[RMDB]
RNA sequence: GGGAACGACUCGAGUAGAGUCGAAAAGUGCCGGAAGGUUCGAAACCUUCAGAUCUCGCAGGGUGACGCCCUGUCAAAAGGCAACUCGGAUCGCGUGAUUAAGAUCUUCUCAUCAAGCGAGUGGCAGGAGCUAUGGCCAUCAAAGUUCGGGCGCAAGCCCCGAUCCCUCUUUCGAGAGGGAUCGGGGAAAAGAAACAACAACAACAAC
Reactivity to DMS in 0.01 (KOAc 150mM, MgCl2 10mM, bicine 150mM(pH8.5), 24C), signal-to-noise 1, nucleotides 027 to 156: g020u010g000c050c020g010g010a030a010g010g020u010u010c220g010a150a150a150c010c000u000u010c020a140g040a130u000c000u000c030g000c050a110g000g000g070u010g020a230c130g030c020c000c000u000g010u000c050a080a090a110a130g020g010c070a080a130c050u000c000g030g010a090u010c000g100c060g000u010g010a120u000u000a020a080g000a130u010c000u000u000c010u000c090a060u010c010a020a060g000c010g000a140g040u010g020g020c020a100g000g010a090g010c070u000a090u000g000g020c030c010a070u030c000a090a060a140g000u000u020c020g000g000g010c050g000c090a080a150g010
Reactivity to 2A3 in 0.01 (KOAc 150mM, MgCl2 10mM, bicine 150mM(pH8.5), 24C), signal-to-noise 2, nucleotides 027 to 156: g000u010g000c010c020g010g000a010a000g040g020u030u150c070g050a120a080a090c020c000u000u010c000a010g030a100u060c070u030c040g020c020a040g000g040g030u040g070a040c110g230c050c000c010u000g050u020c020a020a010a010a020g030g000c020a040a030c040u020c010g070g020a050u020c010g000c020g050u080g050a060u070u160a110a010g000a070u050c010u150u060c030u050c010a100u000c010a040a000g020c000g030a000g040u020g020g030c040a030g020g050a040g030c050u110a090u120g070g030c010c000a040u060c080a120a070a020g030u080u070c030g000g030g000c030g000c050a060a040g010